An RNA of 177 nucleotides, treated with DMS and read out base by base. Values cover nucleotides 27 to 126. The reactions ran in a buffer of 150 mM KOAc, 10 mM MgCl2 and 150 mM bicine (pH 8.5), at 24 C. The data come from the RNA Mapping Database (RMDB), library TTRINS. The DMS profile rests on 1,118 reads.
RNA sequence: GGGAACGACUCGAGUAGAGUCGAAAAGAUAUGGAUCAGAGACCGCGCUUCCGACGAUCGCAAAAUCGAGUCGGAAACGACUCGAUUUUGCGGGAGGAAGCGAACUACGGUUAACUGAUCCUAAGUCCUUACCUGUCUAGUUCGCUAGACAGGUAAGAAAAGAAACAACAACAACAAC
Reactivity to DMS in 0.01 (KOAc 150mM, MgCl2 10mM, bicine 150mM(pH8.5), 24C), signal-to-noise 1, nucleotides 027 to 126: g000a130u000a260u020g000g020a000u010c000a010g020a300g010a030c000c010g030c020g010c000u000u000c010c000g000a140c300g000a010u010c000g000c000a000a000a070a010u000c030g010a040g070u010c000g000g000a050a090a100c010g000a020c000u000c000g010a010u010u020u000u000g000c000g000g000g000a000g000g010a020a010g040c000g000a010a030c100u010a300c030g000g000u000u000a150a100c020u000g010a010u010c000c000u000a030a100g000u030c050